[RMDB]
RNA sequence: GGGAACGACUCGAGUAGAGUCGAAAAGAGAGGGUAACCACCGGCGCGCGUCACUGAUAUAUCCACCGGGGGGUAAGGGGAGAAAAGGAUACAGCGCGACGAAGUUAGCACGCUGCCACGUAAGGCUUGAAGAGUGUAGUGUUCGCACUACACUCAAUCUAAUGAUUACCUUCGGGUAAUCAUUAGAAAAAGAAACAACAACAACAAC
Reactivity to 2A3 in 0.01 (KOAc 150mM, MgCl2 10mM, bicine 150mM(pH8.5), 24C), signal-to-noise 3, nucleotides 027 to 156: g100a000g010a020g050g020g000u080a070a070c020c020a050c080c010g030g000c010g000c000g010c000g060u090c050a020c100u080g050a040u060a010u020a020u220c030c030a060c040c060g000g000g000g010g000g040u060a080a080g050g020g010g000a030g040a020a070a030a010g020g010a010u050a130c030a020g010c010g020c000g010a020c020g030a060a030g040u080u130a020g060c030a010c080g050c060u090g020c030c000a030c000g030u050a040a050g010g010c010u050u100g060a140a050g000a030g000u000g000u010a000g000u000g000u020u020c110g020c040a000c000u000a000c000a000c000u000c000a000a000
Reactivity to DMS in 0.01 (KOAc 150mM, MgCl2 10mM, bicine 150mM(pH8.5), 24C), signal-to-noise 2, nucleotides 027 to 156: g000a100g000a110g000g010g010u000a060a150c030c030a080c090c000g080g010c020g040c050g020c060g010u000c060a180c060u000g030a130u010a140u000a070u000c040c040a120c050c030g030g000g020g000g000g030u010a030a060g020g030g040g010a120g000a090a060a090a150g030g010a160u010a080c040a070g010c020g040c000g010a080c020g050a030a130g020u000u010a100g020c020a060c000g000c030u000g010c010c060a090c120g000u000a090a060g000g010c000u010u010g040a100a120g020a020g000u000g040u000a030g040u000g040u020u010c270g020c010a040c000u010a000c000a000c000u000c000a000a010